[RMDB]
RNA sequence: GGGAACGACUCGAGUAGAGUCGAAAAAUUCGCUGCAGCUGCUGCAUGGGCCUGUAACAAACUUGUAUAAGAUUGUGACCUAUUCAUGGAGCCGCCAGUGGAGUUUGGCUGCAAAGGAUGAGCAGAAGGGUAUCACUGAUUUCGAUCAGUGAUACCCAAAAGAAACAACAACAACAAC
Reactivity to 2A3 in 0.01 (KOAc 150mM, MgCl2 10mM, bicine 150mM(pH8.5), 24C), signal-to-noise 3, nucleotides 027 to 126: a000u070u030c040g010c030u060g020c060a050g000c000u000g000c000u020g110c000a010u050g000g000g000c020c040u100g000u020a030a000c010a020a030a020c040u050u000g140u300a150u120a300a000g060a070u000u020g030u020g050a060c020c030u060a040u050u030c010a010u040g080g050a000g000c000c000g000c000c000a030g000u050g080g010a010g000u020u020u030g110g000c050u020g050c050a020a020a140g160g010a090u080g050a040g020c010a000g020a180a030
Reactivity to DMS in 0.01 (KOAc 150mM, MgCl2 10mM, bicine 150mM(pH8.5), 24C), signal-to-noise 2, nucleotides 027 to 126: a040u000u000c000g000c090u000g050c040a070g030c010u000g000c060u000g000c030a000u010g000g010g000c190c040u000g030u000a010a040c070a010a030a080c010u000u010g030u050a060u030a030a010g020a040u010u010g000u000g020a090c040c060u000a140u010u020c070a070u000g010g000a060g030c050c070g000c000c010a000g000u010g010g000a030g010u030u020u000g000g030c030u000g000c100a030a110a130g060g030a030u010g010a250g000c010a060g000a100a140